[RMDB]
Source: RMDB library M2RFPK, as collected in RNAgym. This 207-nucleotide RNA was probed chemically with 2A3 and DMS. The 2A3 profile rests on 1,106 reads. For DMS the reverse transcriptase was MarathonRT. The DMS profile rests on 1,549 reads. 2A3 adducts were read by reverse transcription with SuperScript II with manganese. Reactivities are rounded to 0.1 and cut off at 0 and 3.

RNA sequence: GGGAACGACUCGAGUAGAGUCGAAAAUUAUCCCCGCAUAUCAUUCAGACCCUUUAUGGAACUGUCAUUCAACCCCAAAAAUCUAGUGCAAAUAUUGUCUUAAUUACUUAGGCUAAAAGAAAUAAGUUAUACAAUACACUCUUCGGAGUGUAUUGAAGAUUUAUUUUCGAUUCGUCGAAAAUAAAUCAAAAGAAACAACAACAACAAC
Reactivity to 2A3 in 0.01 (KOAc 150mM, MgCl2 10mM, bicine 150mM(pH8.5), 24C), signal-to-noise 2, nucleotides 027 to 156: u120u040a070u060c000c000c000c000g010c040a170u130a050u080c050a060u190u080c010a010g040a110c000c000c000u040u070u200a120u050g040g020a040a020c010u040g050u100c030a000u060u110c010a040a100c020c000c000c000a090a050a000a090a050u050c060u080a040g020u010g050c020a050a160a110u060a110u170u030g030u000c020u060u120a130a120u050u000a070c040u020u030a010g040g050c040u060a050a040a060a110g090a050a150a050u120a070a000g010u020u080a070u020a150c000a000a010u010a000c000a010c000u010c000u010u030c100g070g010a000g050u000g000u000a000u000u000g000a010a000
Reactivity to DMS in 0.01 (KOAc 150mM, MgCl2 10mM, bicine 150mM(pH8.5), 24C), signal-to-noise 1, nucleotides 027 to 156: u010u010a110u000c000c010c000c090g000c080a140u000a100u000c050a140u000u000c000a090g000a200c020c010c010u020u000u010a070u030g020g000a100a050c060u000g030u000c050a160u000u010c060a070a190c030c040c020c020a040a130a070a160a060u000c020u000a120g020u000g020c040a070a070a210u000a090u000u010g000u000c040u020u000a040a100u040u000a030c040u000u000a040g000g030c030u000a050a020a060a060g000a090a050a090u000a010a070g030u010u000a150u000a120c020a000a000u010a010c000a010c000u010c000u000u010c290g020g020a030g050u000g010u000a000u000u000g010a080a110